[RMDB]
RNA sequence: GGGAACGACUCGAGUAGAGUCGAAAAUCAAAUAACCAGCAAAAAGAAGACGAGGUAGAGCGCGCGCUGUACCAAAAGCUGGGUGUCUAAAGGCAAGUGUAGACGCCACUACACAAAUAAACAAAAACGCAAUAAUUAGAUUCGUCUAAUUAUUGCGAAAAGAAACAACAACAACAAC
Reactivity to DMS in 0.01 (KOAc 150mM, MgCl2 10mM, bicine 150mM(pH8.5), 24C), signal-to-noise 2, nucleotides 027 to 126: u010c060a040a080a060u010a150a170c020c020a030g030c030a130a060a050a130a070g000a100a120g010a040c070g000a120g010g000u000a020g000a030g000c020g040c300g030c200g020c010u010g000u010a010c000c010a060a090a070a160g020c020u000g000g000g000u000g010u000c030u000a040a110a110g010g000c070a030a080g010u020g000u010a020g020a130c080g010c090c060a100c030u000a000c010a010c020a030a040a080u010a030a030a020c060a080a080a100a010a070
Reactivity to 2A3 in 0.01 (KOAc 150mM, MgCl2 10mM, bicine 150mM(pH8.5), 24C), signal-to-noise 2, nucleotides 027 to 126: u090c000a060a030a050u140a070a120c020c010a000g040c010a000a070a110a020a080g130a120a040g110a080c070g050a070g000g000u030a010g000a010g140c060g000c030g020c040g030c170u030g140u070a020c000c000a040a040a040a040g000c000u000g000g080g020u050g000u000c080u160a130a080a010g050g030c040a100a150g020u010g010u010a010g020a060c080g020c040c040a030c020u030a010c020a000c000a010a130a010u120a030a030a010c060a020a090a010a020a030